The data come from the RNA Mapping Database (RMDB), libraries RFM100 and RFMREP. Chemical mapping of a 177-nucleotide RNA with DMS and 2A3. The reactions ran in a buffer of 150 mM KOAc, 10 mM MgCl2 and 150 mM bicine (pH 8.5), at 24 C.
[RMDB]
RNA sequence: GGGAACGACUCGAGUAGAGUCGAAAACGCGUCGGCAAUAAAGGUAAGCGUUGCGUUCGAAUAUGGGACAAGAAUUAAGCCAACAUGAACUUUAUGUAGAACAGUUAAAAAAGGCUCUAAAGACACGUUGUUAAGUACGUUUCGACGUACUUAACAAAAAAGAAACAACAACAACAAC
Reactivity to DMS in 0.01 (KOAc 150mM, MgCl2 10mM, bicine 150mM(pH8.5), 24C), signal-to-noise 8, nucleotides 027 to 126: c060g010c050g000u010c040g000g000c080a090a040u010a040a060a050g010g020u000a080a210g000c060g000u000u010g000c070g010u000u000c050g000a100a110u030a080u020g010g010g000a110c110a100a110g010a080a090u010u010a050a060g020c060c010a020a040c060a070u010g000a060a130c020u000u000u010a020u020g000u030a070g000a050a080c090a040g000u020u030a000a040a050a070a060a110g000g000c020u010c040u010a050a080a070g010a070c140a060c140g000
Reactivity to 2A3 in 0.01 (KOAc 150mM, MgCl2 10mM, bicine 150mM(pH8.5), 24C), signal-to-noise 6, nucleotides 027 to 126: c020g010c010g010u030c010g060g050c060a050a050u060a080a070a010g030g040u030a070a070g030c020g020u010u020g010c030g010u010u070c030g040a100a030u120a090u180g060g000g030a020c020a060a070g100a090a040u120u090a070a010g010c010c000a000a010c010a060u050g010a020a020c010u060u060u040a080u140g040u050a040g010a090a010c050a090g010u100u120a030a050a040a000a030a010g040g000c010u000c030u070a100a090a010g020a020c020a010c110g060